[RMDB]
RNA sequence: GGGAACGACUCGAGUAGAGUCGAAAAGCCAUCGCUUUCGAGCGAUGGCAUUGCCCAAAGAGGACCUGGGGGUGUCUGGGCUGCUAAACUCAUGAGCCGUUCUACCGCUAAAUUUCGAUUUAGCGAACGACAAAACGUAAUUCGUUACGUUUUGUCGAAAAGAAACAACAACAACAAC
Reactivity to 2A3 in 0.01 (KOAc 150mM, MgCl2 10mM, bicine 150mM(pH8.5), 24C), signal-to-noise 4, nucleotides 027 to 126: g010c000c000a000u010c000g000c010u080u050u180c270g130a010g010c010g000a000u000g000g010c000a000u000u130g020c030c000c000a080a170a010g190a030g030g030a030c040c060u110g070g000g040g000g020u030g000u020c030u050g030g000g000c010u030g000c010u050a090a060a000c000u010c010a070u250g000a000g000c010c000g000u000u000c050u170a300c030c020g000c000u010a000a000a020u100u110u090c220g060a020u000u010u000a000g000c020g010a070a030
Reactivity to DMS in 0.01 (KOAc 150mM, MgCl2 10mM, bicine 150mM(pH8.5), 24C), signal-to-noise 3, nucleotides 027 to 126: g020c000c000a010u000c000g020c000u000u010u010c130g010a020g010c000g000a000u000g000g020c000a000u000u010g010c010c010c000a060a130a120g000a120g010g010a050c030c060u000g010g000g000g010g000u010g000u010c030u000g000g010g010c020u010g010c040u000a040a060a020c010u000c010a130u000g000a020g010c000c010g020u000u000c010u000a140c090c050g010c000u000a000a010a010u000u000u010c160g010a040u000u000u000a010g010c000g000a070a160
Structure probing data (2A3 and DMS) for a 177-nucleotide construct. Source: RMDB library M2PK50, as collected in RNAgym. The RNA was probed in 150 mM KOAc, 10 mM MgCl2 and 150 mM bicine (pH 8.5) at 24 C. 2A3 adducts were read by reverse transcription with SuperScript II with manganese.